[RMDB]
RNA sequence: GGGAACGACUCGAGUAGAGUCGAAAAUAUUUCGUAUCUUUGAUUUGGAAAACAUUUUUAAGGCAUGAGAUAAAUGUUUUUUGUAUAAAUGAAAAAAAUUAAGCUGGGUGUGCAUGCACCUGUAUUCUCGGCUACUUGAGAGGAUGAGGCGAGAUGACACUGCUAUUUUAUUCGUAAAAUAGCAGUGAAAAGAAACAACAACAACAAC
Reactivity to 2A3 in 0.01 (KOAc 150mM, MgCl2 10mM, bicine 150mM(pH8.5), 24C), signal-to-noise 2, nucleotides 027 to 156: u120a030u050u160u020c010g000u040a100u020c030u060u020u080g080a120u100u090u110g040g000a040a060a090a040c050a050u050u000u010u060u110a060a050g010g060c020a090u040g020a000g010a120u090a100a110a060u010g020u020u060u010u010u080u110g050u040a260u100a190a100a140u130g030a070a040a040a080a000a050a070u140u180a040a140g020c090u160g000g020g000u000g010u020g050c020a030u040g010c000a020c020c010u000g020u030a050u040u000c020u000c000g070g000c030u050a050c020u130u160g050a060g010a040g060g020a040u070g010a000g020g030c000g020a000g020a000u060g020a000
Reactivity to DMS in 0.01 (KOAc 150mM, MgCl2 10mM, bicine 150mM(pH8.5), 24C), signal-to-noise 1, nucleotides 027 to 156: u000a010u020u010u000c020g010u000a050u000c030u000u000u000g010a060u010u000u010g020g000a070a090a070a070c020a000u000u000u000u020u000a060a040g000g020c060a080u000g000a190g000a120u000a050a080a060u010g000u000u000u000u000u000u030g000u000a250u000a020a130a080u010g000a020a000a030a090a050a130a170u000u000a040a140g010c060u000g030g000g080u000g030u000g010c050a080u010g060c050a040c050c010u010g010u020a030u010u000c030u000c100g020g020c050u010a090c130u010u020g040a060g000a050g000g010a070u000g010a080g030g020c030g010a120g010a100u010g010a270